[RMDB]
RNA sequence: GGGAACGACUCGAGUAGAGUCGAAAAACUCCGCACCUUACGAGGUGCGGAGAUCCUCCGGUGCCUACUGAGCUGAUAUCAGUUCUGAUUUUAUAUACUGGCUCAGUUCAGCAGGAACAGGAGUCAAUUACGAGACACAAUUCGUUGUGUCUCGUAAAAAAGAAACAACAACAACAAC
Reactivity to 2A3 in 0.01 (KOAc 150mM, MgCl2 10mM, bicine 150mM(pH8.5), 24C), signal-to-noise 2, nucleotides 027 to 126: a010c010u010c000c000g000c010a000c020c000u040u040a070c230g100a060g000g000u000g000c000g000g000a010g000a010u000c000c000u000c000c010g000g090u100g030c000c000u000a000c000u000g000a000g020c000u000g000a000u030a030u260c000a010g030u040u050c050u050g060a120u030u070u290u040a220u000a020u070a130c000u000g000g020c000u000c000a000g000u000u000c010a000g030c000a000g020g010a060a000c000a010g030g030a010g000u020c030a020a040
Reactivity to DMS in 0.01 (KOAc 150mM, MgCl2 10mM, bicine 150mM(pH8.5), 24C), signal-to-noise 2, nucleotides 027 to 126: a070c010u000c030c000g040c000a000c000c000u000u000a100c180g040a030g020g010u000g020c010g010g000a000g000a010u000c070c010u000c000c010g010g020u020g010c000c010u000a030c000u010g020a020g020c020u000g000a030u030a060u010c000a000g000u000u020c170u030g010a160u030u010u100u020a060u050a070u060a050c010u000g000g010c300u000c000a000g030u000u000c000a010g000c090a020g000g010a060a010c000a040g030g010a110g000u000c130a070a110